RNA sequence: GGGAACGACUCGAGUAGAGUCGAAAAAGUCAGAGUGUUUAAUGAAUACGGAUUUGUUCUUGUAGAUAAUGUUGAUUUCGCUACAAUUAUAGAACGAAGUAAAAAGUUUAUUAAUGGCGCAUCUACAAUAACGGGUUUCAUUCGUGAAACCCGUUAUAAAAGAAACAACAACAACAAC
Reactivity to DMS in 0.01 (KOAc 150mM, MgCl2 10mM, bicine 150mM(pH8.5), 24C), signal-to-noise 1, nucleotides 027 to 126: a010g000u010c020a040g000a140g020u000g000u000u000u000a090a090u080g000a060a010u010a040c000g020g000a020u000u000u020g010u030u000c020u000u000g020u000a010g000a000u000a050a110u000g000u000u000g010a220u010u000u000c030g000c000u000a090c080a260a050u000u000a000u000a080g020a000a010c020g050a100a070g020u090a120a020a140a110a150g010u000u000u000a070u020u000a050a080u030g000g000c030g030c190a030u010c010u000a010c010a130
Reactivity to 2A3 in 0.01 (KOAc 150mM, MgCl2 10mM, bicine 150mM(pH8.5), 24C), signal-to-noise 1, nucleotides 027 to 126: a010g010u000c110a020g000a020g120u040g050u120u060u000a000a040u120g160a070a000u040a060c060g090g030a250u000u000u000g020u000u010c000u000u020g000u000a000g000a060u140a130a040u040g150u050u090g020a130u090u040u040c000g000c000u000a040c010a000a050u000u300a120u090a150g020a000a050c000g000a020a000g140u300a030a020a000a000a230g000u000u010u010a040u000u030a030a140u100g050g000c010g000c000a050u000c000u040a020c000a020